[RMDB]
RNA sequence: GGGAACGACUCGAGUAGAGUCGAAAAGUCUCUUCGGAGACCAGCACGAUAUGGACGACUUCUCUAGCGUGUUCUAUGAAGUAGAAAAGUCUCGGAAACGAGUCGCUCUAUGGAGAAUCGGGAGUCGUCCUAAGUCAUUUGGCAAGUUCGCUUGCAACCUCGGUAGUUCAUUCGUGAACUACCGAGGAAAAGAAACAACAACAACAAC
Reactivity to 2A3 in 0.01 (KOAc 150mM, MgCl2 10mM, bicine 150mM(pH8.5), 24C), signal-to-noise 2, nucleotides 027 to 156: g000u000c010u000c040u010u060c210g170g000a010g030a010c010c010a070g130c100a010c140g000a030u050a050u180g000g000a000c010g000a000c020u090u020c090u060c070u140a170g140c030g270u240g050u070u060c000u010a300u060g030a040a000g010u000a000g040a010a120a050a020g030u040c000u000c010g030g000a020a020a020c010g000a000g040u030c020g050c050u010c000u020a010u030g000g000a010g000a030a050u100c090g000g020g010a010g010u000c010g000u010c000c000u000a000a000g000u000c010a030u050u120u220g110g000c010a000a000g010u040u140c220g080c040u020u040g030c010a050a110